The data come from the RNA Mapping Database (RMDB), library RFMREP. This 177-nucleotide RNA was probed chemically with 2A3 and DMS. For 2A3 the reverse transcriptase was SuperScript II with manganese. The RNA was probed in 150 mM KOAc, 10 mM MgCl2 and 150 mM bicine (pH 8.5) at 24 C. Reactivities are given for positions 27 through 126.
[RMDB]
RNA sequence: GGGAACGACUCGAGUAGAGUCGAAAAGGUGCAGCGUCGCGUGUUUCACUCUGGAGGUAGAGCUACUGGAUGGCCGAUGGGCCCCACAAGGUUACUGACGUCAGCCAAACUCCGAAUGCCAGAGUGUAGCCUUAAAAGGGUUCGCCCUUUUAAGGCUAAAAGAAACAACAACAACAAC
Reactivity to 2A3 in 0.01 (KOAc 150mM, MgCl2 10mM, bicine 150mM(pH8.5), 24C), signal-to-noise 1, nucleotides 027 to 126: g040g010u030g030c030a050g020c040g110u080c020g040c070g070u080g100u000u080u120c010a020c000u010c000u000g040g000a050g010g000u080a010g000a010g030c110u160a080c030u000g000g010a020u010g000g000c010c000g010a010u000g010g000g060c000c000c070c010a140c010a040a020g050g020u050u170a300c010u000g020a000c010g000u020c000a000g000c010c000a030a070a030c010u000c050c000g080a080a030u080g020c000c000a000g000a010g000u000g020u000
Reactivity to DMS in 0.01 (KOAc 150mM, MgCl2 10mM, bicine 150mM(pH8.5), 24C), signal-to-noise 1, nucleotides 027 to 126: g020g010u000g010c050a080g000c060g030u000c040g060c110g010u020g020u000u000u000c010a010c020u000c010u000g000g000a070g000g000u010a050g000a010g010c010u000a070c170u000g010g010a060u000g000g000c000c000g040a090u010g000g000g000c030c010c000c160a050c300a070a200g010g030u000u000a060c010u000g010a300c300g000u000c000a000g000c030c040a030a000a150c000u020c060c000g000a050a050u070g000c010c000a050g010a030g020u000g010u000